[RMDB]
RNA sequence: GGGAACGACUCGAGUAGAGUCGAAAAGAUAUGGAUCCCAGGGAGGGAGCUGAUCACAUCGGAAACGAUGUGCAGCUUUGAUCUCCUGGGAUCCUAAGUCAAAAGUAUAACAGUUCGCUGUUAUACACGACUUACCUGAGUUCGCUCAGGUAAGUCGAAAAGAAACAACAACAACAAC
Reactivity to DMS in 0.01 (KOAc 150mM, MgCl2 10mM, bicine 150mM(pH8.5), 24C), signal-to-noise 1, nucleotides 027 to 126: g030a060u000a300u020g000g000a040u000c000c000c000a010g010g020g030a060g030g010g000a030g030c010u000g000a200u030c010a050c010a010u000c000g010g000a170a070a200c000g010a010u000g000u000g010c000a010g020c000u000u000u030g000a150u010c000u010c010c000u000g000g000g020a000u000c000c000u000a040a060g000u010c070a070a110a120a170g010u000a000u000a010a010c000a020g020u000u010c280g010c020u000g010u000u000a000u000a000c020a180
Reactivity to 2A3 in 0.01 (KOAc 150mM, MgCl2 10mM, bicine 150mM(pH8.5), 24C), signal-to-noise 1, nucleotides 027 to 126: g010a010u070a040u100g010g000a000u000c010c000c000a000g080g120g040a090g050g160g040a070g030c000u010g000a160u240c000a020c000a010u010c020g000g030a070a040a030c000g000a010u020g000u000g000c000a000g000c080u120u050u040g080a140u000c050u000c030c020u000g000g000g000a000u000c000c020u000a030a000g020u000c010a040a000a000a300g030u020a000u000a030a000c010a020g060u100u180c270g120c160u000g020u020u010a020u000a000c030a030
An RNA of 177 nucleotides, treated with DMS and 2A3 and read out base by base.
The reactions ran in a buffer of 150 mM KOAc, 10 mM MgCl2 and 150 mM bicine (pH 8.5), at 24 C.
For 2A3 the reverse transcriptase was SuperScript II with manganese.
Reactivities are given for positions 27 through 126.